RNA sequence: GGGAACGACUCGAGUAGAGUCGAAAAACGUUCCUAUGGGUUCGUGAGAGGAGGUGAAACUAAUGAGCCUUAUACCAGAGCUUGCUCUUACUAUUAUAACAGAUGUUAUAGCUGGAAUUAUCUUGUAAGUCAGAUUAUAUUUCGAUAUAAUCUGACUAAAAGAAACAACAACAACAAC
Reactivity to DMS in 0.01 (KOAc 150mM, MgCl2 10mM, bicine 150mM(pH8.5), 24C), signal-to-noise 9, nucleotides 027 to 126: a170c110g000u000u000c000c000u000a070u010g010g000g000u000u010c060g020u000g010a080g020a090g000g000a050g000g010u000g000a140a080a110c110u010a080a080u010g010a130g010c010c020u000u020a080u010a110c090c060a090g000a120g000c060u000u000g000c020u000c020u000u010a080c080u010a080u020u000a040u000a030a040c030a150g000a090u020g000u000u000a020u010a040g010c070u000g000g000a090a080u010u010a090u000c010u000u000g000u010a100
Reactivity to 2A3 in 0.01 (KOAc 150mM, MgCl2 10mM, bicine 150mM(pH8.5), 24C), signal-to-noise 9, nucleotides 027 to 126: a000c030g010u010u000c010c000u020a100u100g040g000g000u030u040c040g010u080g070a110g010a040g080g060a060g010g050u090g050a100a060a020c040u080a100a080u080g030a010g010c000c000u040u090a110u060a060c020c030a020g010a010g080c020u050u070g030c000u030c000u070u050a070c040u030a060u270u060a080u060a120a040c020a030g130a170u150g080u100u050a080u070a060g000c020u030g010g030a100a040u080u010a060u140c030u040u030g060u160a040